[RMDB]
RNA sequence: GGGAACGACUCGAGUAGAGUCGAAAAGUUGUAAACUUCGGUUUACAACAAAUAAGAGAGAAAAGCUCACCAUCGCUCUUCCAAGCGACAACGGAACCAAAAAAACCCAGCUCUUCGGAGCUGGGAAGAUCAUCUUUCAGUUCGCUGAAAGAUGAUCAAAAGAAACAACAACAACAAC
Reactivity to DMS in 0.01 (KOAc 150mM, MgCl2 10mM, bicine 150mM(pH8.5), 24C), signal-to-noise 1, nucleotides 027 to 126: g000u000u000g010u010a000a000a040c010u000u010c160g040g000u000u000u000a020c000a000a000c000a070a050a120u020a110a160g010a090g000a200g000a150a100a120a190g010c020u000c000a110c070c020a150u000c010g030c000u000c120u000u000c110c150a120a050g000c000g010a010c040a050a040c030g020g020a120a060c040c060a000a020a090a030a120a090a110c000c000c000a010g000c010u000c050u000u010c230g020g000a000g020c000u000g000g020g000a000a000
Reactivity to 2A3 in 0.01 (KOAc 150mM, MgCl2 10mM, bicine 150mM(pH8.5), 24C), signal-to-noise 1, nucleotides 027 to 126: g000u010u000g000u000a010a000a000c000u010u050c100g000g010u000u010u000a000c010a010a010c010a000a030a000u090a020a020g050a000g000a010g060a000a170a110a100g040c030u030c030a040c040c040a050u000c000g000c010u020c030u210u030c040c040a080a010g030c000g020a010c040a060a000c060g070g000a030a070c030c030a130a020a010a030a010a020a070c000c000c000a000g020c000u000c010u010u020c260g100g000a000g000c000u010g000g000g010a000a000

Notes:
An RNA of 177 nucleotides, treated with DMS and 2A3 and read out base by base. Reactivities are given for positions 27 through 126.